[RMDB]
RNA sequence: GGGAACGACUCGAGUAGAGUCGAAAAAAGAGCACCACGUUUAAGCAUGAAGACUCAUGGCACUGGACGGCCUGGGUUCAAGUUCCAUAUUCUUUGCUAUUGUCAUCGUCAUUAUGAUUGAAUGCUAGCACCACCGAUUAUUCGUAAUCGGUGGUGCAAAAGAAACAACAACAACAAC
Reactivity to DMS in 0.01 (KOAc 150mM, MgCl2 10mM, bicine 150mM(pH8.5), 24C), signal-to-noise 1, nucleotides 027 to 126: a080a110g000a040g010c000a130c030c020a160c030g010u000u010u000a130a090g000c030a020u020g030a110a090g030a090c120u000c040a030u000g010g000c030a040c130u000g020g010a050c100g000g010c190c070u000g040g020g000u000u000c120a060a010g000u010u000c010c020a020u010a110u000u000c020u000u020u000g020c040u000a080u040u000g000u000c000a010u000c010g000u010c010a080u020u000a110u040g020a030u030u040g000a090a090u000g020c010u000a080
Reactivity to 2A3 in 0.01 (KOAc 150mM, MgCl2 10mM, bicine 150mM(pH8.5), 24C), signal-to-noise 1, nucleotides 027 to 126: a050a000g150a000g010c040a090c040c000a000c010g000u020u020u050a040a020g020c040a040u030g080a020a080g100a070c020u020c040a060u100g010g000c060a020c140u070g030g040a010c030g060g020c050c020u070g000g000g000u000u050c040a000a040g000u000u010c000c000a020u060a100u120u010c020u110u040u090g050c010u010a060u220u070g100u170c010a030u010c010g120u020c060a040u050u300a040u190g060a050u120u120g060a120a080u070g000c000u030a010

This 177-nucleotide RNA was probed chemically with DMS and 2A3. It was measured as part of the RMDB library OK2TST. Reactivities are given for positions 27 through 126.